[RMDB]
RNA sequence: GGGAACGACUCGAGUAGAGUCGAAAAGCUACUACUACUCAACGCAUUUAUUGUGCGCGGUAGACCGGUGGGCGGCAUUCAACAUUAAGUCAGCUCGAAGUCAAACAAAACCCGCGCCGUUGCGCGGUUCGAUUCUAGAGUUCGCUCUAGAAUCGAAAAAAGAAACAACAACAACAAC
Reactivity to 2A3 in 0.01 (KOAc 150mM, MgCl2 10mM, bicine 150mM(pH8.5), 24C), signal-to-noise 9, nucleotides 027 to 126: g040c020u050a040c010u020a030c000u010a020c000u060c070a090a050c020g010c010a040u000u110u130a220u210u300g040u060g010c020g000c000g020g020u040a030g020a080c030c060g040g040u110g050g020g000c010g000g010c010a040u070u130c060a110a120c030a100u120u220a150a030g050u040c050a030g010c010u020c020g040a100a020g030u030c020a080a050a110c030a020a070a080a030c020c000c000g000c000g010c010c020g040u040u160g000c020g000c000g020g000
Reactivity to DMS in 0.01 (KOAc 150mM, MgCl2 10mM, bicine 150mM(pH8.5), 24C), signal-to-noise 5, nucleotides 027 to 126: g010c040u010a070c050u020a090c030u010a010c010u000c050a240a190c040g000c010a040u000u030u030a050u050u020g020u020g020c000g020c080g000g000u010a040g010a030c120c040g000g020u010g010g010g010c010g000g000c050a120u020u030c110a060a090c140a100u020u050a030a120g010u020c070a160g010c000u000c030g010a190a120g000u000c030a110a070a100c140a090a020a120a120c220c000c010g010c000g010c010c200g010u000u000g000c020g020c000g010g000
An RNA of 177 nucleotides, treated with 2A3 and DMS and read out base by base.
Conditions: 150 mM KOAc, 10 mM MgCl2 and 150 mM bicine (pH 8.5), 24 C.
The data come from the RNA Mapping Database (RMDB), libraries RFM100 and RFMREP.
For 2A3 the reverse transcriptase was SuperScript II with manganese.